[RMDB]
The record gives the reactivity of an RNA of 207 nucleotides to 2A3 and DMS. The data come from the RNA Mapping Database (RMDB), library M2RFPK. The RNA was probed in 150 mM KOAc, 10 mM MgCl2 and 150 mM bicine (pH 8.5) at 24 C.
RNA sequence: GGGAACGACUCGAGUAGAGUCGAAAAGACGCCUUUAGAAGAAGAGGCUAGGGGGUAUUCCGGUGUGGGAUACUUAGUAAUAUGCAACGCUAAUUGCAUAAGAUUGUAGGACGGAAUUUACAGUCAUUAGAGAUAAGCACGUUCGCGUGCUUAUCAAGUCUUAUGCAUAGUUCGCUAUGCAUAAGACAAAAGAAACAACAACAACAAC
Reactivity to 2A3 in 0.01 (KOAc 150mM, MgCl2 10mM, bicine 150mM(pH8.5), 24C), signal-to-noise 7, nucleotides 027 to 156: g050a020c060g010c010c010u040u070u080a190g020a260a010g020a050a020g010a030g030g020c050u050a080g050g010g000g020g020u030a040u030u030c020c030g100g080u200g040u190g070g000g010a010u020a050c010u030u050a020g020u060a030a120u020a030u070g000c000a030a010c080g020c210u140a110a050u080u010g000c000a010u010a050a050g030a040u040u090g020u060a020g030g070a030c060g020g070a070a040u090u070u060a060c030a020g000u020c020a040u030u130a050g050a000g000a080u000a010a000g000c000a000c000g010u040u070c130g010c010g080u000g000c000u000u000a000u000c000a000a010
Reactivity to DMS in 0.01 (KOAc 150mM, MgCl2 10mM, bicine 150mM(pH8.5), 24C), signal-to-noise 2, nucleotides 027 to 156: g010a120c070g010c000c020u000u000u000a130g020a150a210g010a080a140g000a060g010g020c020u000a080g030g000g020g010g000u000a060u000u010c020c000g000g020u020g020u000g010g020g020a040u000a030c050u000u030a110g000u000a080a140u010a050u010g010c000a010a030c050g020c150u010a090a100u000u010g020c010a030u000a060a100g000a070u000u000g030u000a090g010g000a120c030g020g010a120a200u000u000u020a070c030a040g030u000c040a080u020u000a130g000a180g000a020u000a000a010g000c000a010c010g020u000u000c280g040c010g050u000g010c000u000u000a000u000c010a050a130